An RNA of 177 nucleotides, treated with DMS and 2A3 and read out base by base. For 2A3 the reverse transcriptase was SuperScript II with manganese.

RNA sequence: GGGAACGACUCGAGUAGAGUCGAAAACCGGGCAGUUGAGCCGGAGCGGCUAGGGGUGGAGCCGAGUUCCGCGAGGAACCCGGCCGGGCAACUCAACCGGCCCGAACCCGACAGCUCACCUCGCAGGAUACGUGUCCAUAUUCGUAUGGACACGUAUAAAAGAAACAACAACAACAAC
Reactivity to DMS in 0.01 (KOAc 150mM, MgCl2 10mM, bicine 150mM(pH8.5), 24C), signal-to-noise 5, nucleotides 027 to 126: c030c010g010g010g020c040a140g030u010u010g010a090g020c040c030g000g000a130g010c080g000g010c040u000a090g030g000g000g000u010g000g000a110g000c000c000g000a040g010u000u000c000c000g000c290g000a220g000g010a020a020c010c020c010g010g010c010c030g000g000g040c030a040a060c040u000c270a090a060c300c160g010g000c010c000c010g000a110a050c040c000c010g000a140c140a040g000c060u010c020a100c090c000u000c070g020c060a100g020g010
Reactivity to 2A3 in 0.01 (KOAc 150mM, MgCl2 10mM, bicine 150mM(pH8.5), 24C), signal-to-noise 7, nucleotides 027 to 126: c010c000g000g030g010c040a060g010u060u070g020a020g030c010c020g040g030a090g050c080g030g000c030u120a140g020g030g000g020u090g040g060a020g000c000c000g000a000g010u010u000c020c000g020c020g030a080g000g010a000a010c000c010c000g000g010c000c010g000g020g000c030a060a070c040u020c100a040a090c030c040g070g010c000c000c000g010a020a020c010c000c000g010a050c040a030g000c010u020c020a040c000c000u030c040g000c040a050g040g100
The data come from the RNA Mapping Database (RMDB), libraries RFM100 and RFMREP.
The 2A3 profile rests on 11,053 reads.
The reactions ran in a buffer of 150 mM KOAc, 10 mM MgCl2 and 150 mM bicine (pH 8.5), at 24 C.
DMS adducts were read by reverse transcription with MarathonRT.